Structure probing data (2A3 and DMS) for a 207-nucleotide construct. Reactivities are given for positions 27 through 156. In probing experiments dimethyl sulfate is read out at A N1 and C N3, which are open when not base-paired. The data come from the RNA Mapping Database (RMDB), library OK3TST. For DMS the reverse transcriptase was MarathonRT.
RNA sequence: GGGAACGACUCGAGUAGAGUCGAAAACGACCCCCUGACGGGUCGGACAUAGCGUCAGGAUCAUCCGUGCCAGUCACCACGGUAAUCAUGUGGCUGAUGAUGGUUUUCCAUCUUAAUCUGACUGAGUCGUAGCAGUCUACAGUACUAUGACAUUAGACGCAUAUACGGAGUUCGCUCCGUAUAUGCGAAAAGAAACAACAACAACAAC
Reactivity to 2A3 in 0.01 (KOAc 150mM, MgCl2 10mM, bicine 150mM(pH8.5), 24C), signal-to-noise 4, nucleotides 027 to 156: c020g030a000c000c000c000c020c000u000g000a010c010g010g000g020u020c050g050g030a050c100a090u220a020g120c010g000u000c000a010g030g020a060u190c060a070u020c010c010g030u020g040c050c010a010g000u000c000a000c000c000a010c000g060g080u090a040a020u070c040a010u060g000u000g010g000c010u000g000a010u070g000a000u000g000g120u080u210u270u120c020c000a000u000c000u030u140a170a160u110c140u160g000a000c000u000g000a000g010u000c030g010u000a000g020c010a000g010u000c110u130a050c060a030g030u020a060c000u000a020u010g000a000c010a010u040u130a070g030a030
Reactivity to DMS in 0.01 (KOAc 150mM, MgCl2 10mM, bicine 150mM(pH8.5), 24C), signal-to-noise 1, nucleotides 027 to 156: c030g010a060c000c000c020c000c040u000g010a040c000g030g080g000u000c010g000g010a070c110a250u000a090g040c030g040u020c000a080g000g030a180u000c050a040u000c020c010g100u010g040c100c020a120g000u000c010a070c120c000a010c030g010g010u010a070a040u040c130a090u000g000u000g000g030c020u000g000a030u030g010a020u000g010g010u040u010u000u010c000c000a070u000c010u000u000a050a140u000c060u050g000a170c050u010g030a170g020u000c000g000u000a010g020c040a030g030u000c060u000a090c130a090g000u000a020c010u030a000u020g000a040c000a210u000u010a080g010a300